Description:
Conditions: 150 mM KOAc, 10 mM MgCl2 and 150 mM bicine (pH 8.5), 24 C. An RNA of 177 nucleotides, treated with 2A3 and read out base by base.
RNA sequence: GGGAACGACUCGAGUAGAGUCGAAAACGAAUCACACUCACACCUUGACACGCUUCUUUGGAGUGUUAUUCUAAAGAACCUGUUCGCCGAGCAAAUACUCUGGUGCUGUGAGCACCCCGGCUGCGUAGGAGCCCAUCCAUUUCGAUGGAUGGGCUCCAAAAGAAACAACAACAACAAC
Reactivity to 2A3 in 0.01 (KOAc 150mM, MgCl2 10mM, bicine 150mM(pH8.5), 24C), signal-to-noise 1, nucleotides 027 to 126: c050g060a000a050u070c100a000c010a000c040u020c000a190c000a030c010c060u060u080g090a000c000a010c110g130c060u070u000c020u000u060u070g000g020a010g000u020g050u080u020a090u110u000c000u000a030a030a030g050a050a020c010c000u010g060u070u060c060g020c000c050g050a050g040c060a040a000a070u060a200c020u040c030u060g000g080u020g000c030u130g070u080g120a020g000c000a000c000c000c000c030g010g000c020u030g000c000g000u000a050
For 2A3, 548 sequencing reads were counted.